[RMDB]
RNA sequence: GGGAACGACUCGAGUAGAGUCGAAAAGAUAUGGACAUCCAGACAUGAAACGGAUCGGAAACGAUCCCGCUUUCAACAGCUGGUAUGUCCUAAGUCAAACAAUCGAUGCACUUCGGUGCAUCGAUUGCUCUCCACCAAGGUUCGCCUUGGUGGAGAGAAAAGAAACAACAACAACAAC
Reactivity to 2A3 in 0.01 (KOAc 150mM, MgCl2 10mM, bicine 150mM(pH8.5), 24C), signal-to-noise 3, nucleotides 027 to 126: g000a020u020a020u080g000g000a010c010a000u020c000c010a000g110a120c180a300u300g000a030a000a000c030g000g000a010u010c020g000g000a000a010a020c010g000a010u000c040c030c030g060c170u050u040u030c140a300a230c080a110g020c010u000g000g080u190a060u000g000u000c000c000u000a000a000g000u010c030a130a090a180c010a020a010u010c000g000a000u020g000c010a010c020u090u110c300g160g010u040g020c000a000u000c000g000a000u000u000g000
Reactivity to DMS in 0.01 (KOAc 150mM, MgCl2 10mM, bicine 150mM(pH8.5), 24C), signal-to-noise 2, nucleotides 027 to 126: g000a010u000a110u010g000g010a020c020a020u000c010c000a000g010a070c060a250u010g000a030a000a080c110g110g010a000u000c000g010g000a030a010a040c000g000a000u000c040c100c100g020c280u010u010u000c030a110a120c210a180g000c000u000g010g000u010a000u000g020u000c010c000u000a000a080g020u000c020a120a160a300c030a000a000u000c000g020a010u010g000c000a010c000u000u010c300g030g000u000g000c000a010u000c040g000a000u000u000g000
Background
Chemical mapping of a 177-nucleotide RNA with 2A3 and DMS. 2A3 adducts were read by reverse transcription with SuperScript II with manganese. The reactions ran in a buffer of 150 mM KOAc, 10 mM MgCl2 and 150 mM bicine (pH 8.5), at 24 C. It was measured as part of the RMDB library TTRDES. For DMS the reverse transcriptase was MarathonRT. The DMS profile rests on 1,863 reads.